Structure probing data (2A3) for a 207-nucleotide construct. The 2A3 profile rests on 1,557 reads. Values cover nucleotides 27 to 156. 2A3 is a SHAPE reagent: it acylates the 2'-hydroxyl of flexible nucleotides of all four kinds. It was measured as part of the RMDB library RNAMAK.
RNA sequence: GGGAACGACUCGAGUAGAGUCGAAAAGGGGUCUCAGCGAUAAGCGUCUAGGGAGCGACGAUCUACACUGAAGCCUCCACGGUGUAGGGAGCUCCCGGACGCUUUUGACGCUGAGACGGAGGCACCCAAAACCUAGAUAUGUUCGCAUAUCUAGGAAGCUUCAUUAGAUGUUCGCAUCUAAUGAAGCAAAAGAAACAACAACAACAAC
Reactivity to 2A3 in 0.01 (KOAc 150mM, MgCl2 10mM, bicine 150mM(pH8.5), 24C), signal-to-noise 2, nucleotides 027 to 156: g050g030g090g030u010c010u010c030a000g010c020g030a070u110a300a020g000c040g000u030c030u260a300g000g010g000a010g000c030g180a300c010g000a020u000c000u000a000c000a000c010u040g050a080a040g010c000c000u010c020c010a010c000g000g020u000g000u000a000g000g000g000a010g050c010u030c000c020c040g000g000a000c020g020c010u000u000u000u010g030a000c010g000c000u000g000a000g000a000c010g000g000a000g000g000c010a030c000c010c000a070a210a030a020c000c000u010a000g000a000u000a000u000g030u030u080c120g000c090a000u000a000u000c000u000a000g000g010a010a010